Chemical mapping of a 177-nucleotide RNA with DMS and 2A3. Reactivities are given for positions 27 through 126.
[RMDB]
RNA sequence: GGGAACGACUCGAGUAGAGUCGAAAAAGGAGGUGCUCCACUUCCAAGCGGAGUCCAAGAACAACAAGGAAUCCUUCAUAUCCCACGUGCCUCUGAUCAAGAAGUCGGACAAUACGUGUGCACCGCAUAAUUACGCACUAUUCGUAGUGCGUAAUUAAAAAGAAACAACAACAACAAC
Reactivity to DMS in 0.01 (KOAc 150mM, MgCl2 10mM, bicine 150mM(pH8.5), 24C), signal-to-noise 8, nucleotides 027 to 126: a080g000g020a050g010g020u010g000c020u010c020c020a040c030u010u010c190c240a120a070g020c070g000g000a060g010u010c030c010a080a130g000a090a100c190a070a100c150a080a200g020g010a090a070u000c010c000u000u020c050a110u000a130u000c010c010c010a110c120g010u010g000c100c040u000c030u000g000a060u010c120a090a110g000a070a100g000u000c040g010g010a070c090a050a070u010a080c100g010u000g010u000g000c050a080c040c070g020c120a130
Reactivity to 2A3 in 0.01 (KOAc 150mM, MgCl2 10mM, bicine 150mM(pH8.5), 24C), signal-to-noise 5, nucleotides 027 to 126: a020g040g010a030g010g020u060g030c030u030c030c000a010c030u220u010c040c010a050a010g040c030g010g010a020g000u010c030c020a030a030g080a110a050c130a020a030c040a050a050g030g020a070a050u060c010c000u020u010c020a060u050a100u120c010c000c000a020c040g010u030g010c000c000u010c010u060g050a080u090c040a040a110g080a080a020g130u060c030g000g000a020c040a060a150u150a130c070g050u080g050u100g030c020a030c070c020g040c020a050

It was measured as part of the RMDB library OK2TRN. 2A3 adducts were read by reverse transcription with SuperScript II with manganese. The RNA was probed in 150 mM KOAc, 10 mM MgCl2 and 150 mM bicine (pH 8.5) at 24 C. For 2A3, 8,872 sequencing reads were counted.